[RMDB]
RNA sequence: GGGAACGACUCGAGUAGAGUCGAAAAUCGAUCCAUGCUCUAGAGAGUCGUACACGUACGUGAUGCGUCUAGAGCGAGGAUCUCUAGUACUCGAUCCAUGCGUACUACGUACUCUGUGUACUGCUCGCCGACGUUCAGUGUUCGCACUGAACGUCGGAAAAGAAACAACAACAACAAC
Reactivity to DMS in 0.01 (KOAc 150mM, MgCl2 10mM, bicine 150mM(pH8.5), 24C), signal-to-noise 2, nucleotides 027 to 126: u000c110g000a050u010c010c020a090u000g010c040u000c010u000a030g000a150g010a090g020u010c170g010u000a010c020a040c020g000u020a030c110g050u000g000a070u000g020c020g010u010c050u000a020g000a000g000c000g010a020g030g010a050u000c080u000c110u000a120g000u000a120c040u000c020g010a040u000c060c050a130u020g000c190g000u000a020c050u000a010c160g010u010a010c030u000c140u000g030u000g000u010a040c060u000g000c050u010c090g010
Reactivity to 2A3 in 0.01 (KOAc 150mM, MgCl2 10mM, bicine 150mM(pH8.5), 24C), signal-to-noise 2, nucleotides 027 to 126: u090c020g040a030u010c010c000a050u090g010c010u030c020u070a010g010a010g040a050g170u100c020g000u030a030c000a000c040g150u250a010c040g000u030g020a110u040g060c020g030u000c010u000a010g020a000g010c000g000a010g030g010a010u000c020u000c010u110a050g030u050a040c010u030c020g050a060u010c050c010a050u120g010c000g000u040a040c010u020a040c080g020u010a030c010u020c090u210g030u010g030u090a010c030u040g000c020u010c000g030
Notes
Conditions: 150 mM KOAc, 10 mM MgCl2 and 150 mM bicine (pH 8.5), 24 C. An RNA of 177 nucleotides, treated with DMS and 2A3 and read out base by base. 2A3 adducts were read by reverse transcription with SuperScript II with manganese. The data come from the RNA Mapping Database (RMDB), library OK2TRN. For 2A3, 2,510 sequencing reads were counted. Reactivities are given for positions 27 through 126. DMS adducts were read by reverse transcription with MarathonRT.